This 177-nucleotide RNA was probed chemically with DMS and 2A3. The reactions ran in a buffer of 150 mM KOAc, 10 mM MgCl2 and 150 mM bicine (pH 8.5), at 24 C. For 2A3, 3,948 sequencing reads were counted.
RNA sequence: GGGAACGACUCGAGUAGAGUCGAAAAGCACCGGUCUACGGACCGGUGCAAAGAGCAGCUAUGAGCUCAAAUAUCAUAGCAAAAAGAAAAAGAAAAGAAAAAAGUAGCAGGAUACGUCCUGCUACAAUAAUUACUGCUGAUUCGUCAGCAGUAAUUAAAAAGAAACAACAACAACAAC
Reactivity to DMS in 0.01 (KOAc 150mM, MgCl2 10mM, bicine 150mM(pH8.5), 24C), signal-to-noise 2, nucleotides 027 to 126: g040c000a000c000c130g020g000u000c000u020a110c260g020g050a020c010c090g010g020u070g140c000a020a010a060g000a020g000c000a110g000c000u000a000u000g000a020g000c000u010c010a060a110a080u030a070u030c000a020u000a000g000c000a170a030a120a070a070g020a080a080a090a140a070g010a030a050a060a050g000a000a040a060a100a140a110g010u000a000g000c000a010g030g000a020u000a030c200g010u000c020c000u000g000c000u000a000c010a020a020
Reactivity to 2A3 in 0.01 (KOAc 150mM, MgCl2 10mM, bicine 150mM(pH8.5), 24C), signal-to-noise 3, nucleotides 027 to 126: g000c000a000c000c020g020g010u000c020u040a200c300g070g010a010c000c000g000g000u000g020c000a010a000a010g000a000g010c020a000g000c000u000a000u000g000a000g000c010u020c050a040a150a020u300a000u010c000a010u000a000g000c010a010a010a030a000a050g100a060a020a000a020a000g180a060a110a030a000g130a060a130a060a020a020a030g000u000a000g000c000a010g010g010a010u030a050c240g060u010c000c000u000g000c000u000a000c000a000a000

Annotation: In probing experiments dimethyl sulfate is read out at A N1 and C N3, which are open when not base-paired. DMS adducts were read by reverse transcription with MarathonRT. It was measured as part of the RMDB library OK1LIB.